[RMDB]
RNA sequence: GGGAACGACUCGAGUAGAGUCGAAAAUAUAGGCGUUAUACUUUACAGCAACAGUACGCCGCUAACGCAAUUGCUACCUCUGGCAUAACAAGUAUAUCGGGUAAGGGUUUCUGUUCCGCACACGCAGGUUCUGUCCGAGUUUCGACUCGGACAGAACAAAAGAAACAACAACAACAAC
Reactivity to DMS in 0.01 (KOAc 150mM, MgCl2 10mM, bicine 150mM(pH8.5), 24C), signal-to-noise 2, nucleotides 027 to 126: u000a100u070a070g000g010c040g010u010u000a020u000a040c060u010u030u020a250c180a150g000c170a040a200c200a120g070u000a130c090g000c000c010g010c090u000a040a110c110g050c030a050a030u000u020g000c050u000a060c060c000u000c030u000g000g030c000a040u030a120a070c120a070a200g000u010a040u000a050u020c000g000g000g000u040a130a200g000g000g020u000u010u040c050u000g060u000u000c000c050g000c060a070c100a010c100g000c010a050g010
Reactivity to 2A3 in 0.01 (KOAc 150mM, MgCl2 10mM, bicine 150mM(pH8.5), 24C), signal-to-noise 2, nucleotides 027 to 126: u170a020u040a050g000g000c020g020u080u040a080u080a020c010u100u090u070a120c050a130g000c030a040a010c000a110g000u030a020c030g020c010c000g000c020u050a060a000c060g000c070a040a080u040u120g000c000u090a180c000c010u000c080u060g040g000c000a030u030a110a070c030a020a080g050u090a050u050a000u150c020g000g000g000u030a060a060g020g010g040u020u040u020c030u020g020u130u000c020c010g140c000a010c000a000c030g090c050a010g000